[RMDB]
RNA sequence: GGGAACGACUCGAGUAGAGUCGAAAAUGGCGCAGGAUCCGCUUGCUGCCGAGCGUGCCCAUGUUCUGCAACGCCUUACGGCCCUGCGCGACGGUGCGCGGGUGGAGGUGGGGGCGGGCAAGGAUCACGCGUGCAUAUGAUUCGUCAUAUGCACGCGAAAAGAAACAACAACAACAAC
Reactivity to DMS in 0.01 (KOAc 150mM, MgCl2 10mM, bicine 150mM(pH8.5), 24C), signal-to-noise 2, nucleotides 027 to 126: u000g010g010c020g020c010a090g000g000a050u000c040c040g010c090u000u000g000c080u000g020c030c020g050a120g020c010g010u000g010c150c030c110a150u000g010u000u000c020u030g010c040a040a120c100g000c060c090u000u000a130c020g000g000c180c010c000u000g020c010g020c010g000a080c130g030g020u020g000c060g020c030g010g000g000u000g010g010a090g000g010u000g030g030g010g000g030c070g000g000g010c010a060a060g010g000a130u000c110a160
Reactivity to 2A3 in 0.01 (KOAc 150mM, MgCl2 10mM, bicine 150mM(pH8.5), 24C), signal-to-noise 1, nucleotides 027 to 126: u060g010g030c000g000c000a010g000g040a080u050c020c010g070c110u010u150g020c050u090g000c010c010g000a000g030c030g030u050g000c010c030c040a090u140g040u000u040c000u010g010c010a080a040c050g000c000c010u030u150a020c030g070g000c050c000c010u080g000c020g020c030g000a090c060g040g070u160g060c030g000c070g020g000g060u180g030g030a090g060g000u100g000g020g000g010g000c000g020g000g040c040a070a050g040g000a050u130c050a040
Source: RMDB library OK2TST, as collected in RNAgym.
An RNA of 177 nucleotides, treated with DMS and 2A3 and read out base by base.
DMS adducts were read by reverse transcription with MarathonRT.
The RNA was probed in 150 mM KOAc, 10 mM MgCl2 and 150 mM bicine (pH 8.5) at 24 C.
For 2A3, 1,641 sequencing reads were counted.